This 177-nucleotide RNA was probed chemically with DMS and 2A3. For 2A3, 2,988 sequencing reads were counted. The RNA was probed in 150 mM KOAc, 10 mM MgCl2 and 150 mM bicine (pH 8.5) at 24 C.

RNA sequence: GGGAACGACUCGAGUAGAGUCGAAAAAACAGGGUUAGAAGUCAAGGAAUCAAACUCACAGAGGGAGAGCAAGUAACUGUCGAAAAAAGACUAGAGCGAAAUCCAGACAAACGAUGCCUUGAAUGGAUCAUUAACACGGAUUCGUCCGUGUUAAUGAAAAAGAAACAACAACAACAAC
Reactivity to DMS in 0.01 (KOAc 150mM, MgCl2 10mM, bicine 150mM(pH8.5), 24C), signal-to-noise 4, nucleotides 027 to 126: a080a050c100a060g010g000g020u000u000a100g010a120a140g010u000c030a040a030g000g020a090a050u010c080a060a140a140c110u010c050a080c130a070g010a130g000g010g010a190g010a040g020c090a050a070g010u000a090a060c110u010g020u000c030g000a000a050a080a080a090a100g000a030c020u010a030g010a120g010c040g000a080a110a080u000c020c010a090g000a080c070a020a080a080c130g000a080u000g010c030c040u000u000g010a060a040u020g000g010a160
Reactivity to 2A3 in 0.01 (KOAc 150mM, MgCl2 10mM, bicine 150mM(pH8.5), 24C), signal-to-noise 3, nucleotides 027 to 126: a000a000c040a040g020g030g000u040u040a040g040a100a030g040u050c010a050a090g010g020a030a060u040c050a090a040a080c040u030c040a170c060a110g040a050g030g010g010a050g010a010g020c040a040a050g020u050a070a060c030u070g020u050c000g070a220a090a000a090a090a000g020a020c040u080a040g020a010g110c020g010a100a000a020u020c020c000a010g040a090c000a010a100a000c060g050a030u090g010c000c000u040u030g030a040a070u090g070g030a020